[RMDB]
RNA sequence: GGGAACGACUCGAGUAGAGUCGAAAAGACGUGUGGCAGGACGGCGCGCUCCUGGUCGAUCUCGGCGGCCCGCAAUGGGCUGCGUACUUCGCGGCAUUCGAGCAGCAGGCGGUGCCGACCGACGGUAAUCCCUCAUCAUGUUCGCAUGAUGAGGGAUAAAAGAAACAACAACAACAAC
Reactivity to 2A3 in 0.01 (KOAc 150mM, MgCl2 10mM, bicine 150mM(pH8.5), 24C), signal-to-noise 2, nucleotides 027 to 126: g000a040c090g040u070g030u110g050g060c100a060g090g020a040c010g000g010c010g000c000g030c040u030c000c030u040g050g090u040c030g000a090u020c040u030c060g100g000c000g000g000c000c000c030g020c030a090a200u210g060g070g000c030u010g020c020g000u010a060c050u050u130c040g000c010g020g060c050a060u100u150c060g080a050g080c040a020g000c000a030g090g170c030g070g050u110g020c010c000g100a210c000c030g000a020c020g040g000u020a020
Reactivity to DMS in 0.01 (KOAc 150mM, MgCl2 10mM, bicine 150mM(pH8.5), 24C), signal-to-noise 3, nucleotides 027 to 126: g020a070c050g020u000g010u000g020g020c090a070g020g010a110c050g010g010c030g000c040g000c060u000c190c040u000g000g000u000c030g000a070u000c110u000c020g010g010c040g010g000c010c000c010g030c190a120a110u020g000g000g000c010u000g000c010g000u000a060c120u000u010c110g010c060g000g000c150a130u010u020c100g000a110g000c050a040g000c070a130g000g000c010g020g010u000g010c010c000g000a110c030c000g000a020c110g010g010u000a100
Record summary: The record gives the reactivity of an RNA of 177 nucleotides to 2A3 and DMS. In probing experiments dimethyl sulfate is read out at A N1 and C N3, which are open when not base-paired. DMS adducts were read by reverse transcription with MarathonRT. Conditions: 150 mM KOAc, 10 mM MgCl2 and 150 mM bicine (pH 8.5), 24 C. The data come from the RNA Mapping Database (RMDB), library OK2TRN.